The data come from the RNA Mapping Database (RMDB), library M2RFPK. Structure probing data (DMS and 2A3) for a 207-nucleotide construct. For DMS the reverse transcriptase was MarathonRT. Values are in units of 0.01, from 0 to 300, in steps of 10. The DMS profile rests on 4,162 reads. Conditions: 150 mM KOAc, 10 mM MgCl2 and 150 mM bicine (pH 8.5), 24 C.
RNA sequence: GGGAACGACUCGAGUAGAGUCGAAAAGUGCCUCGUCGGCCCGGCAUGCCAACCUGAUCCGAAGUUCAAGGUGGUUUCUCUGGCCUUGCAGAGAGAUGCGCGUCGGAAGAACCGACGAACAAACCUUAAAACAAAACGACGUUCGCGUCGUUUUGAACCUUAAUAUAUUGUUCGCAAUAUAUUAAGGAAAAGAAACAACAACAACAAC
Reactivity to DMS in 0.01 (KOAc 150mM, MgCl2 10mM, bicine 150mM(pH8.5), 24C), signal-to-noise 2, nucleotides 027 to 156: g000u000g020c040c080u000c030g010u000c020g000g010c020c000c020g050g050c070a060u010g000c040c070a100a070c020c020u010g000a070u010c070c140g010a150a100g020u010u000c030a040a040g000g000u000g040g020u000u000u010c010u000c020u010g010g000c160c130u000u010g040c020a050g010a050g000a080g000a090u000g000c060g020c050g000u000c000g000g030a130a130g030a130a080c000c010g000a040c000g020a020a060c020a040a090a100c070c000u000u010a040a080a120a150c020a020a010a000a020c000g000a020c020g040u010u000c300g000c060g060u000c000g000u000u020u000u020g010a080a130
Reactivity to 2A3 in 0.01 (KOAc 150mM, MgCl2 10mM, bicine 150mM(pH8.5), 24C), signal-to-noise 5, nucleotides 027 to 156: g060u030g060c010c010u020c010g010u000c000g010g010c000c030c000g020g010c020a040u110g010c010c000a090a080c020c000u030g020a030u060c040c130g260a200a070g060u080u070c060a080a030g010g010u010g010g000u020u120u010c010u000c000u010g090g030c060c090u070u190g010c020a000g010a000g000a000g010a050u150g050c060g010c020g060u010c000g010g030a120a040g020a130a120c000c000g000a000c000g010a030a010c030a020a060a050c010c040u150u270a070a060a030a050c000a000a000a000a010c000g000a000c000g010u040u060c140g010c010g080u010c000g000u010u000u000u000g000a000a010